[RMDB]
RNA sequence: GGGAACGACUCGAGUAGAGUCGAAAACUGUGGCACCCGAAAGCCUUCUGCCGAAGACUGGCGCCUAAGGUUUCAAGGCGCCUCUUUAACCUAUGUUUUCAUGAAGUGCGACAGGAAAAUGCCGCUAGGCACCAUAUCCCUUCGGGGAUAUGGUGCCAAAAGAAACAACAACAACAAC
Reactivity to 2A3 in 0.01 (KOAc 150mM, MgCl2 10mM, bicine 150mM(pH8.5), 24C), signal-to-noise 1, nucleotides 027 to 126: c000u000g010u010g020g000c020a010c040c000c070g080a030a030a000g020c000c000u050u000c030u050g100c070c090g000a010a000g000a010c070u060g010g000c010g000c000c000u070a160a120g100g060u140u240u170c070a030a010g000g010c000g000c000c010u010c020u010u110u050a040a010c010c010u080a070u220g060u050u040u040u030c030a030u100g020a030a020g050u110g180c010g040a010c010a040g000g000a020a040a000a040u070g000c040c000g000c030u060a080
Reactivity to DMS in 0.01 (KOAc 150mM, MgCl2 10mM, bicine 150mM(pH8.5), 24C), signal-to-noise 1, nucleotides 027 to 126: c040u010g060u000g020g010c010a060c040c000c030g000a040a050a300g030c000c080u000u000c040u000g000c260c170g000a010a010g030a020c130u010g000g000c030g000c000c000u000a120a080g000g000u000u000u040c110a070a050g000g030c000g000c000c000u000c020u000u000u020a110a150c180c190u000a070u020g020u010u000u000u000c020a080u010g000a110a040g040u020g040c000g000a110c070a100g020g000a040a090a120a170u000g000c000c010g020c100u010a060
An RNA of 177 nucleotides, treated with 2A3 and DMS and read out base by base. DMS adducts were read by reverse transcription with MarathonRT.